[RMDB]
RNA sequence: GGGAACGACUCGAGUAGAGUCGAAAAGAGAGUGCUGGCCGUAGUAGGCGUGAAAAGAAAAACGUACUAUUACGAACGAAACUGAUCUGUGCGAAAAAGCGUGACACUAAAUGUGUCGUAGCACGAAGGGAAUACUAAUGUUCGCAUUAGUAUUCCCAAAAGAAACAACAACAACAAC
Reactivity to 2A3 in 0.01 (KOAc 150mM, MgCl2 10mM, bicine 150mM(pH8.5), 24C), signal-to-noise 9, nucleotides 027 to 126: g090a000g010a010g020u070g010c050u050g030g040c030c000g000u000a000g020u000a000g000g000c020g000u040g040a050a060a070a090g300a040a090a020a010a000c020g000u180a270c000u000a010u000u010a010c020g020a070a010c050g030a100a060a060c050u040g020a060u020c040u120g040u050g030c030g070a110a060a020a030a030g110c110g090u110g010a000c000a000c020u130a190a120a110u270g000u000g010u000c000g000u010a020g000c010a010c040g010a080a090
Reactivity to DMS in 0.01 (KOAc 150mM, MgCl2 10mM, bicine 150mM(pH8.5), 24C), signal-to-noise 6, nucleotides 027 to 126: g020a070g010a060g010u000g020c060u030g000g020c140c000g020u000a000g010u000a000g000g010c000g010u000g020a090a090a160a130g040a100a110a050a140a020c000g000u000a080c020u000a010u000u000a010c000g000a120a140c070g010a060a090a060c090u020g000a120u010c050u000g020u000g000c030g000a060a060a090a090a070g000c120g010u040g000a010c000a010c010u020a070a100a100u050g010u010g010u000c000g010u020a090g000c000a020c040g010a100a100
This 177-nucleotide RNA was probed chemically with 2A3 and DMS. The RNA was probed in 150 mM KOAc, 10 mM MgCl2 and 150 mM bicine (pH 8.5) at 24 C. For 2A3, 12,694 sequencing reads were counted.